RNA sequence: GGGAACGACUCGAGUAGAGUCGAAAAGCAAUGAGGUAAGGUGGGACUUUUCCUUCGGGAACCAAGCGGUUGGUUCCGAGGGGGGUGUGAUCCAGGUACCGCCGUAGAAACUGGAUUACGACGCCUACCCGGGAUUCAAACCCGGUCCCCCUCAGAGGGAUAUGAACCUGUUCGCAGGUUCAUAUCCAAAAGAAACAACAACAACAAC
Reactivity to 2A3 in 0.01 (KOAc 150mM, MgCl2 10mM, bicine 150mM(pH8.5), 24C), signal-to-noise 1, nucleotides 027 to 156: g040c070a030a080u130g000a030g020g060u070a140a020g080g040u080g030g040g020a050c030u100u070u070u060c000c030u140u090c060g040g020g030a020a070c000c050a000a020g060c080g010g010u010u030g000g000u000u010c050c000g010a010g020g010g000g000g000g000u110g010u000g020a010u000c030c000a020g000g030u010a000c030c030g000c010c010g010u030a030g120a030a300a060c000u020g010g010a010u000u000a000c060g060a050c070g040c030c050u030a050c080c000c000g000g000g000a070u290u250c170a070a090a270c080c000c000g010g000u030c000c000c030c000c000u010c010a050g030a070g030
This 207-nucleotide RNA was probed chemically with 2A3.
The RNA was probed in 150 mM KOAc, 10 mM MgCl2 and 150 mM bicine (pH 8.5) at 24 C.
The data come from the RNA Mapping Database (RMDB), library VIROID.